[RMDB]
RNA sequence: GGGAACGACUCGAGUAGAGUCGAAAAUCUUCCUGCUUAGAAGAGGAGUCUCCUGGACGCCCCGCCCGGUCGGGAUGGGCCGCAGUUCCCGACGAGGAGCCCGCAGGUGGGAGGAUCAGCCACCGGAUAAGUCGUGGGUUCGCCCACGACAAAAGAAACAACAACAACAAC
Reactivity to DMS in 0.01 (KOAc 150mM, MgCl2 10mM, bicine 150mM(pH8.5), 24C), signal-to-noise 2, nucleotides 027 to 129: u040c080u020u030c000c030u020g010c100u010u050a090g000a090a070g020a100g020g010a070g040u030c020u010c000c000u020g050g020a000c000g000c080c060c000c000g070c000c000c000g050g060u070c190g000g000g000a100u000g030g020g030c080c050g000c150a080g000u020u010c010c000c000g030a150c050g030a090g020g020a130g050c120c040c000g020c080a070g030g030u000g010g000g000a040g000g030a040u020c090a110g030c030c040a080c030c040g040g000a130u070a020a090
Reactivity to 2A3 in 0.01 (KOAc 150mM, MgCl2 10mM, bicine 150mM(pH8.5), 24C), signal-to-noise 4, nucleotides 027 to 129: u010c000u000u010c010c000u020g030c030u080u140a070g030a160a050g010a150g070g000a000g020u050c010u040c010c010u010g030g080a020c040g060c010c000c000c000g040c000c020c000g200g060u150c110g060g020g000a060u030g030g000g000c000c030g000c030a040g000u010u040c000c000c000g010a050c030g010a050g010g020a020g000c010c000c000g020c060a020g000g000u040g020g000g010a020g000g010a010u010c000a000g080c030c000a040c000c050g020g010a060u090a210a020